This 207-nucleotide RNA was probed chemically with 2A3 and DMS. It was measured as part of the RMDB library OK3TST. For 2A3 the reverse transcriptase was SuperScript II with manganese.

RNA sequence: GGGAACGACUCGAGUAGAGUCGAAAAGUGAUAAUUUGGAGGAUUGCGGUGUAACUGAUGGGAUCGAGUACGAUUCGCCUGAUGAGGCUGUUCGUAGGUGGAAUCGCCGAGCAUGACCCCCGAGCAGCACGCCGCCAAGAUUCGUGAACUGGAAGCGGUAUACAUGAUCUUUCGAGAUCAUGUAUACAAAAGAAACAACAACAACAAC
Reactivity to 2A3 in 0.01 (KOAc 150mM, MgCl2 10mM, bicine 150mM(pH8.5), 24C), signal-to-noise 8, nucleotides 027 to 156: g080u060g080a090u060a200a080u080u080u120g070g010a040g030g020a050u050u080g010c010g000g020u020g020u060a130a100c010u030g010a040u110g010g010g010a010u030c020g010a050g110u110a120c020g020a020u020u050c050g060c030c010u040g040a080u070g020a030g100g080c070u060g060u070u020c030g030u060a060g000g030u100g090g060a030a020u020c020g010c070c030g060a040g020c120a080u180g060a140c000c000c000c010c010g010a040g010c010a000g000c020a010c010g000c010c000g000c010c000a040a010g050a060u070u050c020g020u050g060a080a040c040u060g030g040a050a010g040c060g080
Reactivity to DMS in 0.01 (KOAc 150mM, MgCl2 10mM, bicine 150mM(pH8.5), 24C), signal-to-noise 3, nucleotides 027 to 156: g000u000g020a100u000a030a070u000u000u010g010g010a180g000g010a100u000u000g030c040g020g030u000g020u000a070a100c050u010g000a150u000g010g020g010a090u000c000g010a240g020u000a050c030g010a090u000u000c030g010c010c020u000g040a130u000g010a100g020g030c060u000g010u000u000c040g020u000a050g020g020u000g040g020a200a050u000c010g020c030c040g000a150g040c060a110u000g010a230c030c000c010c020c050g020a110g020c000a070g020c010a080c040g010c020c010g000c020c070a050a080g010a140u010u010c030g020u010g010a060a120c050u010g010g010a070a100g010c060g010